[RMDB]
RNA sequence: GGGAACGACUCGAGUAGAGUCGAAAAGAAAGCGUCAUUCGUCGAAAGAGAAGGUAAUGACGCAUUAGGUUACGUGUGCAACCUAAUCAGCGCACGACAAGAAAUCUCAUUCGCAGAAAUAAGAAAAGGUACUAGCGGUAUUCGUACCGCUAGUACCAAAAGAAACAACAACAACAAC
Reactivity to DMS in 0.01 (KOAc 150mM, MgCl2 10mM, bicine 150mM(pH8.5), 24C), signal-to-noise 1, nucleotides 027 to 126: g000a090a280a030g000c110g000u000c060a030u000u000c000g000u020c000g000a110a300a090g030a120g020a300a120g080g030u000a050a000u000g000a000c000g000c000a000u000u000a030g000g010u040u000a190c110g000u000g020u000g170c060a000a000c030c000u000a220a170u000c130a300g000c060g000c000a000c000g000a300c300a110a030g040a050a120a140u000c000u000c050a120u020u000c080g000c120a190g000a000a200a020u000a000a080g000a110a000a020a150
Reactivity to 2A3 in 0.01 (KOAc 150mM, MgCl2 10mM, bicine 150mM(pH8.5), 24C), signal-to-noise 3, nucleotides 027 to 126: g120a030a100a030g000c020g030u030c000a000u000u080c010g060u020c010g090a060a230a140g100a030g040a030a090g170g100u190a010a000u010g000a000c000g010c000a000u000u100a040g000g000u000u010a010c030g020u000g030u000g050c040a000a000c000c010u050a080a300u040c030a020g000c010g000c000a000c030g000a010c000a000a050g110a050a000a040u040c030u010c050a060u150u130c020g020c110a020g050a120a060a000u250a180a010g020a060a090a040a010
Description
The record gives the reactivity of an RNA of 177 nucleotides to DMS and 2A3. Values cover nucleotides 27 to 126. For DMS, 808 sequencing reads were counted. The RNA was probed in 150 mM KOAc, 10 mM MgCl2 and 150 mM bicine (pH 8.5) at 24 C. The data come from the RNA Mapping Database (RMDB), library OK1LIB. The 2A3 profile rests on 2,604 reads.